An RNA of 177 nucleotides, treated with DMS and 2A3 and read out base by base. For DMS the reverse transcriptase was MarathonRT. 2A3 adducts were read by reverse transcription with SuperScript II with manganese. Reactivities are given for positions 27 through 126. As a SHAPE reagent, 2A3 marks flexible, mostly unpaired nucleotides at the ribose 2'-OH.

RNA sequence: GGGAACGACUCGAGUAGAGUCGAAAAGGGCGUCAUUUCGAUGACGCCCAUACGUCUACUCCGAUUGGCGAGGACGACGCCGACGGGCGCCUUUGCCAAUCGCACCGUCCAGAUUCGUCUGGACGAAGUCACAAGCGGAGUUCGCUCCGCUUGUGACAAAAGAAACAACAACAACAAC
Reactivity to DMS in 0.01 (KOAc 150mM, MgCl2 10mM, bicine 150mM(pH8.5), 24C), signal-to-noise 1, nucleotides 027 to 126: g100g020g040c000g060u000c000a020u000u010u020c160g000a010u000g010a000c030g010c030c000c000a040u000a010c300g060u000c000u000a040c010u000c000c000g010a010u010u000g010g000c000g010a030g000g020a170c040g070a300c030g010c000c010g060a180c300g010g000g000c000g000c020c000u000u000u010g000c040c100a010a000u000c000g010c100a120c230c000g030u000c000c000a040g000a010u000u010c260g010u000c000u000g000g000a000c000g010a000a020
Reactivity to 2A3 in 0.01 (KOAc 150mM, MgCl2 10mM, bicine 150mM(pH8.5), 24C), signal-to-noise 1, nucleotides 027 to 126: g030g000g010c010g000u000c000a000u030u050u210c230g090a010u000g010a000c010g000c000c000c010a000u010a000c010g020u000c010u020a000c020u000c010c010g010a020u000u010g000g000c010g010a000g060g020a040c100g070a110c040g040c020c010g250a300c130g080g000g070c010g020c000c000u040u030u200g000c000c000a000a010u020c000g000c000a040c000c050g000u000c000c000a000g000a000u030u070c140g050u010c080u010g010g000a010c010g000a010a020